This 177-nucleotide RNA was probed chemically with DMS and 2A3.
DMS (dimethyl sulfate) methylates the pairing face of unpaired adenines and cytosines.
It was measured as part of the RMDB library M2PK50.
For 2A3 the reverse transcriptase was SuperScript II with manganese.
The reactions ran in a buffer of 150 mM KOAc, 10 mM MgCl2 and 150 mM bicine (pH 8.5), at 24 C.
For DMS, 1,010 sequencing reads were counted.
Values cover nucleotides 27 to 126.
[RMDB]
RNA sequence: GGGAACGACUCGAGUAGAGUCGAAAAUCGGACUGGUUCGCCAGUCCGAAAAUAAGGGUCCGUGCUUGCAGCUGAUUGUAAAUGCUAACUGGCCUUACAUCAAAAGCCCGGACUUCGGUCCGGGCAAGAAACAGUUCAAGUUCGCUUGAACUGUUUCAAAAGAAACAACAACAACAAC
Reactivity to DMS in 0.01 (KOAc 150mM, MgCl2 10mM, bicine 150mM(pH8.5), 24C), signal-to-noise 2, nucleotides 027 to 126: u020c020g000g020a040c010u000g030g010u000u010c180g030c010c010a000g010u020c020c020g000a000a010a050a080u000a110a160g000g000g000u010c020c050g020u010g030c050u000u000g000c060a030g010c230u020g000a150u030u000g000u010a010a060a090u010g020c020u000a100a050c050u010g000g000c000c030u000u010a060c100a090u010c100a060a130a260a190g000c010c000c010g020g000a050c000u020u030c130g020g000u000c000c000g060g010g020c010a000a010
Reactivity to 2A3 in 0.01 (KOAc 150mM, MgCl2 10mM, bicine 150mM(pH8.5), 24C), signal-to-noise 1, nucleotides 027 to 126: u050c000g000g000a000c000u030g000g000u050u100c120g030c080c030a000g000u050c000c010g010a000a000a000a020u080a010a010g040g010g000u020c010c010g000u000g030c040u050u010g010c030a030g030c030u200g140a230u220u050g120u050a090a200a130u140g030c010u010a070a040c000u030g010g010c010c010u040u040a040c070a060u170c070a000a150a160a000g000c050c000c020g030g000a000c020u000u030c180g050g000u010c000c000g000g000g000c000a000a000